This 170-nucleotide RNA was probed chemically with DMS and 2A3.
Source: RMDB library 15KLIB, as collected in RNAgym.

[RMDB]
RNA sequence: GGGAACGACUCGAGUAGAGUCGAAAAUCAUCCUCGAGUUUCUUGAUGGUUCUCCUGCUCUUCCGGAGCUUUCUUUCGAGGUCUUCCGCGUCUUUUCUUGCUUGGAUCCAUUUCUCGAGGACGUCCUAGAGCCUGGGCUUCGGCCCAGGCAAAAGAAACAACAACAACAAC
Reactivity to DMS in 0.01 (KOAc 150mM, MgCl2 10mM, bicine 150mM(pH8.5), 24C), signal-to-noise 1, nucleotides 027 to 129: u120c230a070u010c040c000u000c060g040a000g050u120u000u000c070u060u130g010a100u040g020g020u060u010c040u030c100c120u030g010c000u010c000u050u000c160c060g060g020a100g000c000u070u020u000c160u010u110u030c070g030a070g000g030u010c050u030u000c010c000g090c170g050u000c100u010u040u050u010c010u000u140g030c230u080u070g050g000a020u020c050c090a020u000u000u000c010u000c000g020a000g020g020a010c080g070u040c010c000u000a040g000a000
Reactivity to 2A3 in 0.01 (KOAc 150mM, MgCl2 10mM, bicine 150mM(pH8.5), 24C), signal-to-noise 4, nucleotides 027 to 129: u130c000a030u000c010c010u000c020g020a020g000u110u150u030c060u130u160g040a020u060g010g020u060u070c030u030c030c020u040g000c010u010c010u090u050c040c040g000g010a000g000c000u030u120u020c000u000u110u100c050g030a000g000g070u000c050u060u040c000c030g040c020g030u030c040u040u160u100u010c050u080u080g030c000u020u090g020g000a030u080c040c000a050u020u050u000c010u000c000g010a050g020g000a020c000g000u000c000c000u050a060g010a030
Conditions: 150 mM KOAc, 10 mM MgCl2 and 150 mM bicine (pH 8.5), 24 C.
High 2A3 reactivity points to a flexible backbone, as in loops and unpaired stretches.